[RMDB]
Structure probing data (DMS and 2A3) for a 177-nucleotide construct.
For 2A3, 831 sequencing reads were counted.
2A3 adducts were read by reverse transcription with SuperScript II with manganese.
RNA sequence: GGGAACGACUCGAGUAGAGUCGAAAAUUCGCUGAUGCCGAUUCCGCGAGCGGGCCGGUGUGCAUACAACGUCCAUCCCCGGUCGAGCGGGGACACCGCGAUCACCGUCGUGUUGGCCAUGCCUAGAGGGAAUUUGGAUAUUCGUAUCCAAAUUCCCAAAAGAAACAACAACAACAAC
Reactivity to DMS in 0.01 (KOAc 150mM, MgCl2 10mM, bicine 150mM(pH8.5), 24C), signal-to-noise 2, nucleotides 027 to 126: u020u000c080g010c050u000g000a070u020g010c070c010g010a090u020u010c010c060g000c030g000a070g060c020g000g010g000c110c050g030g020u000g000u000g040c130a120u040a040c040a140a130c130g000u020c020c030a120u000c000c000c000c000g000g000u000c110g010a180g000c030g040g030g000g000a070c020a000c010c030g020c090g000a130u010c080a100c050c000g010u000c100g000u010g040u000u000g000g000c120c090a100u030g030c050c040u000a120g000a300
Reactivity to 2A3 in 0.01 (KOAc 150mM, MgCl2 10mM, bicine 150mM(pH8.5), 24C), signal-to-noise 2, nucleotides 027 to 126: u080u020c050g040c090u070g010a060u120g070c040c000g090a100u130u000c010c010g000c020g000a050g100c000g000g040g000c000c040g010g000u030g000u090g020c000a040u020a260c070a180a030c130g050u030c050c000a080u040c010c000c000c000g030g010u160c090g030a130g030c000g000g020g010g000a000c010a010c010c000g030c060g000a040u040c020a010c090c000g050u080c020g020u020g060u040u000g000g000c020c020a080u210g030c040c000u070a040g040a090